Conditions: 150 mM KOAc, 10 mM MgCl2 and 150 mM bicine (pH 8.5), 24 C. Structure probing data (DMS) for a 177-nucleotide construct.
[RMDB]
RNA sequence: GGGAACGACUCGAGUAGAGUCGAAAAGUACUAUGCCCGCCAUUAUUGAUGCAUGCUCCACCUCCCACUCCUUAAUAGUUGCUUUGAAGUUUCCUUUCGGUGCGUUCUGCAGCGUCUUUAUCAGAAACUAAGCAAUGCGAUUCGUCGCAUUGCUUAGAAAAGAAACAACAACAACAAC
Reactivity to DMS in 0.01 (KOAc 150mM, MgCl2 10mM, bicine 150mM(pH8.5), 24C), signal-to-noise 1, nucleotides 027 to 126: g030u010a090c090u000a070u020g020c040c040c030g020c110c070a070u020u000a060u000u000g020a070u010g030c050a080u010g010c050u000c020c020a130c040c010u000c030c010c040a100c040u000c020c030u000u000a040a080u010a140g000u000u010g010c110u000u010u000g010a050a280g000u000u000u000c010c090u010u000u010c060g010g010u000g000c050g020u000u010c030u030g010c010a040g000c090g020u020c030u010u000u000a060u020c080a130g020a090a020a080
It was measured as part of the RMDB library M2PK90. For DMS the reverse transcriptase was MarathonRT. The DMS profile rests on 1,195 reads.